RNA sequence: GGGAACGACUCGAGUAGAGUCGAAAAUGUUGAGAGUACAGCAGAAGGGAGGAUUGCUGUUUCUAUUCCAAAAGCAGAAAUUACGGGUAAUGCAACUGUGAUGGAGCAUUGUCCAUAACAGGAUAUGAUUACCGAUCAGUUUCGACUGAUCGGUAAUAAAAGAAACAACAACAACAAC
Reactivity to 2A3 in 0.01 (KOAc 150mM, MgCl2 10mM, bicine 150mM(pH8.5), 24C), signal-to-noise 4, nucleotides 027 to 126: u240g010u080u120g050a050g030a030g110u090a040c010a020g010c020a040g050a130a080g120g050g000a060g030g040a150u030u050g020c020u010g000u010u010u000c040u080a110u010u020c020c030a060a080a070a040g050c040a010g100a080a090a060u110u070a050c060g080g020g010u080a060a040u060g040c070a120a030c040u030g030u110g120a090u160g040g000a000g020c070a080u020u140g010u020c000c000a000u060a020a030c050a020g030g050a040u040a050u200g080
Reactivity to DMS in 0.01 (KOAc 150mM, MgCl2 10mM, bicine 150mM(pH8.5), 24C), signal-to-noise 2, nucleotides 027 to 126: u020g000u030u020g020a060g020a100g030u010a090c080a030g040c070a060g000a150a060g010g000g020a050g000g000a180u030u000g030c030u000g000u000u070u000c020u010a120u000u010c020c010a050a010a090a060g000c060a020g010a140a010a070u030u010a020c130g010g030g030u000a040a010u000g000c000a090a160c030u010g010u010g010a090u010g000g000a200g000c040a060u000u050g020u000c000c000a050u000a080a040c130a080g000g000a060u050a060u000g000
Structure probing data (2A3 and DMS) for a 177-nucleotide construct. The reactions ran in a buffer of 150 mM KOAc, 10 mM MgCl2 and 150 mM bicine (pH 8.5), at 24 C. For 2A3 the reverse transcriptase was SuperScript II with manganese.